[RMDB]
RNA sequence: GGGAACGACUCGAGUAGAGUCGAAAACAGAUAGGGUCUUAGAGACCAUGGCAUCACACCUCCUAGGCUCACAGUGUGCUGGCCACGUGCCUGCAGUCCGCUCAUCUGACUUAUUUAUAGAACAUCUCUAACCUGGUACUCACUCCUGUUGAAGGAACGUAAAAUGAGCGUUCGCGCUCAUUUUACGAAAAGAAACAACAACAACAAC
Reactivity to 2A3 in 0.01 (KOAc 150mM, MgCl2 10mM, bicine 150mM(pH8.5), 24C), signal-to-noise 1, nucleotides 027 to 156: c040a010g070a050u210a170g030g080g000u020c020u080u200a090g010a020g010a070c010c000a000u060g000g000c030a010u020c050a110c010a030c040c000u000c000c030u030a060g030g050c000u050c030a040c050a130g080u000g050u010g030c050u060g050g000c000c010a140c070g150u240g020c000c000u020g000c000a010g070u030c020c070g050c010u070c020a110u040c050u020g140a010c090u130u110a070u220u180u030a160u110a060g150a030a070c020a100u060c000u000c010u100a050a150c020c000u000g000g040u140a150c040u000c060a020c020u070c030c050u030g020u100u090g030a070a050g000g040a070a000